[RMDB]
RNA sequence: GGGAACGACUCGAGUAGAGUCGAAAAGAUAUGGAGAUGGAAGUCUCUCCCCACCACGCGGUCGGAAACGACCGGCGUGAGGAGAUGGACUCCUAAGUCAAAACGUACGUGGUUCGCCACGUACGAAACAAUCGUUUAAGUUCGCUUAAACGAUUGUAAAAGAAACAACAACAACAAC
Reactivity to DMS in 0.01 (KOAc 150mM, MgCl2 10mM, bicine 150mM(pH8.5), 24C), signal-to-noise 7, nucleotides 027 to 126: g020a130u010a110u010g000g000a050g010a140u000g010g010a060a090g010u000c000u000c170u000c010c010c010c030a240c150c040a030c050g030c000g000g000u000c000g000g000a080a100a230c010g010a010c000c000g030g020c070g010u000g010a100g010g000a020g000a050u000g010g000a040c000u000c000c000u010a040a040g000u000c030a050a060a190a080c000g000u000a000c000g030u000g000g010u000u010c210g010c000c000a000c000g000u000a000c000g000a010a040
Reactivity to 2A3 in 0.01 (KOAc 150mM, MgCl2 10mM, bicine 150mM(pH8.5), 24C), signal-to-noise 5, nucleotides 027 to 126: g070a050u150a100u290g060g020a070g020a070u190g100g080a140a080g020u000c010u000c010u020c030c000c000c000a070c020c000a010c010g030c010g000g000u010c000g020g040a080a050a050c010g000a000c000c000g080g000c000g000u010g010a040g010g010a020g000a050u140g020g040a030c010u000c000c000u030a100a030g070u070c050a010a030a070a110c020g000u000a000c000g000u010g010g030u060u080c240g060c090c000a000c000g010u000a000c000g010a000a010